This 177-nucleotide RNA was probed chemically with DMS. The reactions ran in a buffer of 150 mM KOAc, 10 mM MgCl2 and 150 mM bicine (pH 8.5), at 24 C. The data come from the RNA Mapping Database (RMDB), library TTRINS. Reactivities are given for positions 27 through 126.

RNA sequence: GGGAACGACUCGAGUAGAGUCGAAAAGAUAUGGAAUCAAUAGACCUUCCAACGACAGACAUGCAUGCAAUCGGAAACGAUUGUAAAUGCAACAGCUGUGUUGGAAGGUCUAUUGAUUCCUAAGUCACGUAGCAUAGAUGUUCGCAUCUAUGCUACGAAAAGAAACAACAACAACAAC
Reactivity to DMS in 0.01 (KOAc 150mM, MgCl2 10mM, bicine 150mM(pH8.5), 24C), signal-to-noise 3, nucleotides 027 to 126: g010a050u020a300u020g000g010a020a000u000c000a000a000u000a000g020a000c000c000u000u000c000c000a000a020c010g010a030c020a010g010a090c170a220u000g000c010a040u000g000c010a010a000u000c010g000g010a190a140a300c010g000a000u000u000g020u000a030a100a110u000g030c010a020a100c300a120g010c000u010g020u000g010u000u000g000g000a020a000g010g000u000c000u000a000u000u000g010a000u000u000c000c000u000a010a070g010u010c050a220